[RMDB]
RNA sequence: GGGAACGACUCGAGUAGAGUCGAAAAUUGUGUCUAGGGUUUUCGCGCUUCGCGAGCAGUACCCAGAUGCGAGGAUAGUGAUAGUGGAUAGAGUCUCGCCAACGGGGCUGCGCAAGAUACCGGUAUCACGCUAAAUUUAUUUCGAUAAAUUUAGCGUAAAAGAAACAACAACAACAAC
Reactivity to 2A3 in 0.01 (KOAc 150mM, MgCl2 10mM, bicine 150mM(pH8.5), 24C), signal-to-noise 6, nucleotides 027 to 126: u060u050g060u010g020u030c020u040a190g020g030g030u070u030u060u000c030g020c040g000c100u130u160c100g010c020g020a020g010c000a010g040u240a300c000c000c000a010g040a050u130g000c020g000a010g050g010a060u070a150g120u130g130a070u060a080g190u160g150g020a040u080a160g090a050g100u050c000u000c000g040c050c010a020a060c030g000g010g000g000c010u040g000c020g000c010a020a000g020a060u100a080c000c040g040g000u070a070u150c050
Reactivity to DMS in 0.01 (KOAc 150mM, MgCl2 10mM, bicine 150mM(pH8.5), 24C), signal-to-noise 7, nucleotides 027 to 126: u010u020g020u000g000u000c020u000a090g010g000g010u000u000u010u000c030g000c020g020c160u010u030c080g020c160g010a080g010c060a020g000u010a070c000c010c010a030g000a300u010g020c000g000a020g010g000a090u020a080g020u020g010a120u010a060g030u010g010g010a150u010a070g010a090g000u010c000u010c000g000c000c060a060a280c120g000g000g000g020c010u000g000c000g000c110a080a140g010a070u010a070c090c030g010g010u010a040u020c110
Record summary
An RNA of 177 nucleotides, treated with 2A3 and DMS and read out base by base. The DMS profile rests on 18,277 reads. For DMS the reverse transcriptase was MarathonRT. The data come from the RNA Mapping Database (RMDB), library OK1LIB.